[RMDB]
RNA sequence: GGGAACGACUCGAGUAGAGUCGAAAAUGGCCAGGUGCGCGUCCUGGCUGAACAUGGAGGUGAAGAUCAUGGAAAUGGAGAUCGGCGAUAGGAGUCCUUAUUUUUGUGGCGGCUUCCUGUUACUCGAUCACUAUACUUGGUUCGCCAAGUAUAGUGAAAAAGAAACAACAACAACAAC
Reactivity to DMS in 0.01 (KOAc 150mM, MgCl2 10mM, bicine 150mM(pH8.5), 24C), signal-to-noise 5, nucleotides 027 to 126: u010g010g000c010c010a020g000g000u010g020c120g020c100g000u000c010c000u000g010g010c020u000g010a050a060c120a070u000g010g010a070g000g020u000g020a080a080g000a060u000c060a050u000g000g000a050a060a080u000g000g010a080g010a070u000c070g000g010c070g010a100u000a060g010g010a110g000u010c030c020u000u010a070u010u000u000u010u010g020u000g010g010c100g020g000c040u000u000c010c030u010g010u010u000a080c030u010c050g010a250
Reactivity to 2A3 in 0.01 (KOAc 150mM, MgCl2 10mM, bicine 150mM(pH8.5), 24C), signal-to-noise 4, nucleotides 027 to 126: u120g030g000c000c010a000g040g010u080g060c180g010c030g070u020c000c000u000g010g010c000u010g000a010a010c030a060u150g010g040a030g000g050u080g050a140a070g030a110u030c020a050u080g050g050a060a100a040u070g050g010a060g000a060u060c050g040g020c030g040a030u100a080g070g030a040g060u010c020c000u140u110a170u120u260u050u080u140g080u060g040g020c040g000g020c000u130u050c000c010u030g030u040u040a080c030u020c040g010a060